[RMDB]
RNA sequence: GGGAACGACUCGAGUAGAGUCGAAAAUCAUGGUGUUCUGUCUGACUCUCUCAGACCAUCUCCUGUAGCACCUGCAUCUUGAAUGUGACUUAACAAUCCUGGCUGAGCAGAGACUUCGUAGUGUGGCCAGCGUUAUCGGAUUCGUCCGAUAACGCUGAAAAGAAACAACAACAACAAC
Reactivity to 2A3 in 0.01 (KOAc 150mM, MgCl2 10mM, bicine 150mM(pH8.5), 24C), signal-to-noise 2, nucleotides 027 to 126: u090c050a060u140g020g000u030g010u090u080c060u040g040u010c020u040g030a060c030u040c000u030c000u020c050a020g000a080c010c010a010u070c020u040c020c080u050g080u060a020g000c010a010c010c000u020g020c000a110u090c020u080u130g110a180a040u060g090u040g050a120c060u120u070a130a010c020a010a110u030c000c020u020g020g020c020u030g070a010g010c030a000g030a000g040a220c010u050u010c090g110u080a080g050u010g030u080g150g000c000
Reactivity to DMS in 0.01 (KOAc 150mM, MgCl2 10mM, bicine 150mM(pH8.5), 24C), signal-to-noise 3, nucleotides 027 to 126: u020c090a090u000g010g000u000g000u000u000c070u010g010u000c050u010g010a070c130u000c100u000c090u000c030a050g020a090c040c090a080u020c100u000c070c010u010g030u030a080g010c040a030c020c010u000g010c100a070u020c020u020u000g010a110a080u010g010u010g000a090c110u010u000a080a090c110a080a090u020c030c010u000g000g010c030u010g010a090g000c080a090g020a120g010a100c090u000u020c090g020u000a120g010u000g020u000g010g000c070

Description:
An RNA of 177 nucleotides, treated with 2A3 and DMS and read out base by base. Source: RMDB library OK2TRN, as collected in RNAgym.